An RNA of 177 nucleotides, treated with 2A3 and DMS and read out base by base. For 2A3, 10,511 sequencing reads were counted. 2A3 adducts were read by reverse transcription with SuperScript II with manganese. The RNA was probed in 150 mM KOAc, 10 mM MgCl2 and 150 mM bicine (pH 8.5) at 24 C. It was measured as part of the RMDB library OK1LIB.
RNA sequence: GGGAACGACUCGAGUAGAGUCGAAAAGCGCUCUCGGGACCGUCCGCGCGUGUUGAUCCAAGCGUCCCGCAGACCGCGCCAAAACGCGGUGAACCUGGGCUGUCCUCGCAGGUAGAGCGCCGUCAGCCCGUUACUGAAAGUUCGCUUUCAGUAACGGAAAAGAAACAACAACAACAAC
Reactivity to 2A3 in 0.01 (KOAc 150mM, MgCl2 10mM, bicine 150mM(pH8.5), 24C), signal-to-noise 7, nucleotides 027 to 126: g010c010g000c010u000c010u020c020g010g000g010a020c010c030g020u020c000c020g020c010g010c010g030u090g070u090u240g050a110u080c070c080a120a020g040c030g050u030c040c010c000g000c000a010g040a030c000c000g000c010g020c010c010a060a090a030a010c010g000c010g020g000u030g050a040a040c010c040u070g000g010g000c010u010g010u020c000c010u060c070g120c100a060g000g110u150a010g010a000g000c010g000c000c000g090u080c020a070g030c000
Reactivity to DMS in 0.01 (KOAc 150mM, MgCl2 10mM, bicine 150mM(pH8.5), 24C), signal-to-noise 4, nucleotides 027 to 126: g020c020g030c000u010c010u000c040g020g000g000a030c030c070g000u010c000c010g000c150g010c080g000u010g010u000u030g020a140u020c140c060a090a100g010c070g020u000c020c010c000g000c230a110g000a020c020c030g020c000g060c030c090a060a030a100a300c030g010c010g000g000u020g010a080a090c120c110u020g000g000g000c010u000g000u010c000c010u000c200g000c140a110g010g020u020a030g010a020g010c010g000c000c050g010u010c130a060g010c080